[RMDB]
Structure probing data (2A3) for a 207-nucleotide construct. For 2A3, 574 sequencing reads were counted.

RNA sequence: GGGAACGACUCGAGUAGAGUCGAAAAGAAUUGCUGAUUGCUAACAUCCGAACGGUGGAUCUCUGAGAUACUUGAGGAUGCUGGUCAGGCAUUGUCGUUGGGAUCUUUAACACCACCCUCCUAAAAUCCAGCUCACACUAUUAAUAUAAAGUGUUGACAGUAAUGCUCGGUUCGCCGAGCAUUACUGAAAAGAAACAACAACAACAAC
Reactivity to 2A3 in 0.01 (KOAc 150mM, MgCl2 10mM, bicine 150mM(pH8.5), 24C), signal-to-noise 2, nucleotides 027 to 156: g030a000a130u150u060g040c020u030g010a220u180u140g050c030u040a050a010c000a030u000c000c000g040a040a050c060g000g000u020g000g010a060u000c090u010c090u300g040a060g020a070u060a050c080u160u040g020a030g040g000a040u010g040c020u050g020g030u130c080a050g020g000c010a010u070u050g150u040c050g070u060u110g040g030g000a010u000c000u050u150u060a140a050c050a030c040c000a030c050c000c000u030c000c050u110a060a060a010a040u050c080c040a040g040c050u080c020a030c000a020c030u060a090u300u130a290a070u210a040u090a260a100a040g020u010g020u040u060g100a050
Annotation
2A3 adducts were read by reverse transcription with SuperScript II with manganese.